Structure probing data (DMS) for a 177-nucleotide construct.
It was measured as part of the RMDB library OK2TST.
Values cover nucleotides 27 to 126.
For DMS, 1,097 sequencing reads were counted.
For DMS the reverse transcriptase was MarathonRT.
[RMDB]
RNA sequence: GGGAACGACUCGAGUAGAGUCGAAAAGUUCGAUCUGGUUGAUAUAGCUGGCUGAGAUCCCGAGAAGCUCGGCAAGCGCGGCUUGGGUGAGGUCGCGUUCUUUGCGCAGCUGGCGCAGGCGUGAACCCUCGACAGUCGUAUUCGUACGACUGUCGAGAAAAGAAACAACAACAACAAC
Reactivity to DMS in 0.01 (KOAc 150mM, MgCl2 10mM, bicine 150mM(pH8.5), 24C), signal-to-noise 1, nucleotides 027 to 126: g020u010u000c080g010a160u010c030u010g010g010u010u000g000a130u000a100u000a150g020c010u000g000g000c030u000g000a120g010a160u000c100c020c020g030a110g000a200a110g040c020u000c050g010g030c070a110a040g010c030g000c050g020g020c020u010u010g010g000g030u000g000a020g030g030u000c020g030c020g000u000u000c030u000u020u010g000c000g030c050a130g000c140u000g010g000c010g000c040a020g020g000c040g020u000g000a140a090c100c020